[RMDB]
RNA sequence: GGGAACGACUCGAGUAGAGUCGAAAAUUACGUGCUUGUAACACACUACACACUCGUUUUGUAAUCGAGAAGUAGUUGCAAGAACGGUCCUCUCAUUGCCUGACUAGCUGAGAGCCAUCCUUCUAUCGUAUGUCUCGGAAUUCGUUCCGAGACAUACAAAAGAAACAACAACAACAAC
Reactivity to 2A3 in 0.01 (KOAc 150mM, MgCl2 10mM, bicine 150mM(pH8.5), 24C), signal-to-noise 9, nucleotides 027 to 126: u190u100a020c010g010u010g020c000u000u010g010u050a080a010c050a010c000a030c130u050a020c060a010c010a030c040u010c030g050u010u030u070u190g280u200a100a100u100c000g000a000g010a070a020g000u020a010g000u000u020g000c000a000a010g010a020a000c010g030g000u040c000c000u000c000u000c010a080u050u250g020c020c000u070g070a120c030u050a010g000c010u000g000a000g010a010g050c020c010a100u050c010c000u030u080c030u060a100u120c060
Reactivity to DMS in 0.01 (KOAc 150mM, MgCl2 10mM, bicine 150mM(pH8.5), 24C), signal-to-noise 2, nucleotides 027 to 126: u060u060a040c010g030u000g030c000u000u000g000u010a030a030c110a170c200a100c150u000a010c130a130c250a260c000u010c000g000u030u020u020u080g010u030a120a050u000c010g000a010g000a300a030g010u000a040g020u000u000g000c020a020a000g010a020a010c020g000g000u010c150c020u010c030u000c010a070u000u000g000c010c000u000g010a140c130u030a170g000c010u000g010a010g000a050g020c270c060a050u000c040c030u000u000c070u000a110u030c150